[RMDB]
RNA sequence: GGGAACGACUCGAGUAGAGUCGAAAAGCAGGUGGAAGCACUUGUACGGUGGUUACUGCAGCCUCAUAUACAUGAAUGACUGAUGUAGAGUUCGGUUGGAGCGACAAGUAUUUAGCUUGAGAUAGCUUACAGCUUCUCUGUUCGCAGAGAAGCUGUAAAAAGAAACAACAACAACAAC
Reactivity to DMS in 0.01 (KOAc 150mM, MgCl2 10mM, bicine 150mM(pH8.5), 24C), signal-to-noise 1, nucleotides 027 to 126: g050c000a000g010g080u010g030g000a150a050g000c050a080c020u000u000g000u050a070c140g040g000u050g000g050u030u050a030c030u000g010c000a070g000c010c080u000c030a050u000a090u000a020c070a020u000g000a130a050u030g010a050c090u000g000a040u000g000u010a000g030a200g020u040u040c070g000g010u050u000g040g010a090g110c020g000a060c040a050a000g010u000a010u000u040u060a110g000c000u000u000g030a180g000a180u000a030g000c000u000
Reactivity to 2A3 in 0.01 (KOAc 150mM, MgCl2 10mM, bicine 150mM(pH8.5), 24C), signal-to-noise 2, nucleotides 027 to 126: g090c050a000g020g090u120g000g070a040a060g110c000a000c010u110u010g050u060a000c040g130g000u010g000g060u010u010a090c000u000g010c000a000g000c070c000u000c030a010u110a000u080a120c160a040u210g100a160a030u080g090a040c080u000g140a060u070g040u060a000g020a020g020u010u170c000g010g000u040u050g020g000a000g000c030g050a040c030a000a000g010u060a120u130u160u160a070g000c010u000u000g000a020g030a170u040a040g000c000u000
Record summary:
An RNA of 177 nucleotides, treated with DMS and 2A3 and read out base by base. For DMS, 1,298 sequencing reads were counted. Conditions: 150 mM KOAc, 10 mM MgCl2 and 150 mM bicine (pH 8.5), 24 C. Values cover nucleotides 27 to 126.